[RMDB]
RNA sequence: GGGAACGACUCGAGUAGAGUCGAAAAACACUACUGUUUCAACGGACGACUCCAUCGCAGCGGCGAUAACGCGACAUGUGUACAGUACAGGAACAGUUACGCCCUCAGUUCCACUUACCGCAAGCAGCGACUCAUAUAGUUUCGACUAUAUGAGUCGAAAAGAAACAACAACAACAAC
Reactivity to 2A3 in 0.01 (KOAc 150mM, MgCl2 10mM, bicine 150mM(pH8.5), 24C), signal-to-noise 9, nucleotides 027 to 126: a000c110a020c070u160a040c030u050g050u020u060u050c070a110a040c070g060g060a020c020g050a030c020u010c030c020a050u030c040g020c050a050g030c050g090g000c030g090a110u070a140a050c040g030c020g060a060c050a100u110g040u020g020u060a050c040a080g040u030a060c020a050g040g040a070a010c010a030g010u030u040a030c050g030c010c000c000u040c030a020g020u040u020c010c010a040c040u050u080a050c010c010g040c060a070a070g020c030a040g050
Reactivity to DMS in 0.01 (KOAc 150mM, MgCl2 10mM, bicine 150mM(pH8.5), 24C), signal-to-noise 7, nucleotides 027 to 126: a100c140a120c100u020a060c090u010g010u000u020u000c030a110a110c130g000g000a100c060g000a090c040u010c030c020a060u000c050g010c050a110g010c110g010g020c070g000a090u030a050a070c080g000c030g010a100c100a070u010g020u000g020u020a090c100a100g000u020a050c080a100g000g010a030a040c060a070g020u000u010a050c110g010c020c010c010u010c050a100g000u020u010c020c010a110c080u020u010a020c060c030g000c070a080a080g020c130a090g000
Overview: Structure probing data (2A3 and DMS) for a 177-nucleotide construct. For DMS the reverse transcriptase was MarathonRT. Source: RMDB library OK1LIB, as collected in RNAgym. The 2A3 profile rests on 31,840 reads.